[RMDB]
RNA sequence: GGGAACGACUCGAGUAGAGUCGAAAAGAUAUGGACUGAUCAUCACGGACUUGGACCUAGUAUCGGAAACGAUACUAGCUAGUCCGGAUGAGUCAGUCCUAAGUCAAAAGCAGUCUUCGGACUGCAAUCGAAGUAAACCGUUCGCGGUUUACUUCGAAAAAGAAACAACAACAACAAC
Reactivity to 2A3 in 0.01 (KOAc 150mM, MgCl2 10mM, bicine 150mM(pH8.5), 24C), signal-to-noise 1, nucleotides 027 to 126: g030a040u060a050u210g010g000a000c010u040g000a020u020c000a010u000c060a030c240g010g020a000c000u100u260g140g070a050c020c010u000a000g000u000a000u000c020g010g030a060a030a020c000g020a010u000a010c000u000a000g000c010u030a000g000u040c030c000g000g010a000u010g010a020g010u050c000a000g000u000c000c000u020a010a000g020u010c060a030a050a080a080g010c000a000g010u000c000u080u210c300g180g000a010c000u010g000c020a000a000
Reactivity to DMS in 0.01 (KOAc 150mM, MgCl2 10mM, bicine 150mM(pH8.5), 24C), signal-to-noise 2, nucleotides 027 to 126: g000a030u000a300u000g010g000a020c000u010g000a070u000c000a000u000c010a200c010g020g000a010c000u000u010g030g010a090c300c000u010a000g010u000a000u000c000g020g000a140a100a140c000g010a000u010a000c000u000a000g000c010u000a020g010u000c000c010g010g010a000u000g000a020g010u020c020a000g010u000c000c000u000a000a130g000u030c060a130a080a160a140g010c000a010g010u000c010u000u000c250g010g010a030c000u000g020c020a020a010